Structure probing data (DMS and 2A3) for a 177-nucleotide construct. The DMS profile rests on 2,619 reads. The RNA was probed in 150 mM KOAc, 10 mM MgCl2 and 150 mM bicine (pH 8.5) at 24 C. The 2A3 profile rests on 2,541 reads.
[RMDB]
RNA sequence: GGGAACGACUCGAGUAGAGUCGAAAAGAUAUGGACAAUCCGAUGAGAACGCACUCGGAAACGAGUGGUUCGAGGAUGUCCUAAGUCAAAACGCCGAACUCUCACGUUCGCGUGAGAGUUCGGCGAACGAGAAACAGUAGUUCGCUACUGUUUCUCGAAAAGAAACAACAACAACAAC
Reactivity to DMS in 0.01 (KOAc 150mM, MgCl2 10mM, bicine 150mM(pH8.5), 24C), signal-to-noise 2, nucleotides 027 to 126: g000a040u010a300u000g000g000a020c000a030a110u000c000c010g010a170u000g000a250g010a000a000c000g030c000a000c000u000c020g010g010a070a100a140c010g000a010g020u000g010g010u000u000c000g000a070g000g010a020u000g000u000c000c000u000a000a060g000u010c020a070a060a140a160c010g000c000c000g010a040a030c000u010c010u000c000a020c030g020u000u020c240g020c020g000u000g000a000g000a010g010u010u000c000g000g000c010g000a000a000
Reactivity to 2A3 in 0.01 (KOAc 150mM, MgCl2 10mM, bicine 150mM(pH8.5), 24C), signal-to-noise 1, nucleotides 027 to 126: g000a020u070a030u120g020g000a030c050a190a300u000c000c020g160a300u210g000a050g000a120a010c070g050c300a000c000u010c000g030g050a040a100a040c040g000a000g000u010g000g000u000u000c000g010a020g000g010a000u000g000u000c010c010u010a140a010g060u020c020a000a000a100a200c050g000c020c000g070a030a000c000u080c000u000c040a000c080g080u140u150c300g060c000g050u000g010a000g000a020g030u040u000c060g000g040c000g000a010a000